Structure probing data (DMS and 2A3) for a 207-nucleotide construct. The 2A3 profile rests on 2,666 reads. Reactivities are given for positions 27 through 156.

[RMDB]
RNA sequence: GGGAACGACUCGAGUAGAGUCGAAAACGAAGUUCGCUUCGCAUGAAGGGGUCCUUCCGAAGCUCGCUAGCGAGGCUGAAGCCUCCACGGCUACCCACCGCUAGAACUACGAGAUAGCUGAAGGACGGAGGCACCCGGCCGGGCAGUUCGCUGCCAAAGUGUAGAUAAGGUUCGCCUUAUCUACACUAAAAGAAACAACAACAACAAC
Reactivity to DMS in 0.01 (KOAc 150mM, MgCl2 10mM, bicine 150mM(pH8.5), 24C), signal-to-noise 2, nucleotides 027 to 156: c020g000a010a020g040u010u000c200g080c000u000u000c030g080c030a130u010g020a160a030g010g010g010g020u010c020c010u000u020c020c080g000a270a170g030c010u000c070g020c050u010a090g020c020g030a060g010g050c020u010g010a270a130g010c000c000u010c060c240a120c130g010g020c000u000a050c030c050c020a300c070c000g010c010u000a080g030a070a210c030u000a110c050g020a120g020a200u030a110g030c080u000g020a040a070g060g000a080c070g000g020a090g000g030c060a110c030c040c000g000g000c030c040g040g020g000c000a060g010u000u010c170g020c030u000g020c000c010a020a080
Reactivity to 2A3 in 0.01 (KOAc 150mM, MgCl2 10mM, bicine 150mM(pH8.5), 24C), signal-to-noise 4, nucleotides 027 to 156: c010g010a010a000g020u110u130c140g060c100u020u010c030g050c100a150u170g150a180a110g030g020g020g020u000c000c000u010u000c020c010g050a110a060g040c000u010c010g010c000u000a010g020c010g030a020g030g100c060u100g060a100a000g000c010c010u130c220c090a140c130g000g000c010u060a100c000c020c010a080c070c000g010c000u030a010g100a190a110c140u230a080c190g010a000g010a030u050a030g070c110u040g010a010a000g020g000a010c040g010g040a050g000g000c020a030c020c010c010g010g020c000c020g000g020g000c000a000g020u090u090c210g030c120u020g010c020c000a180a150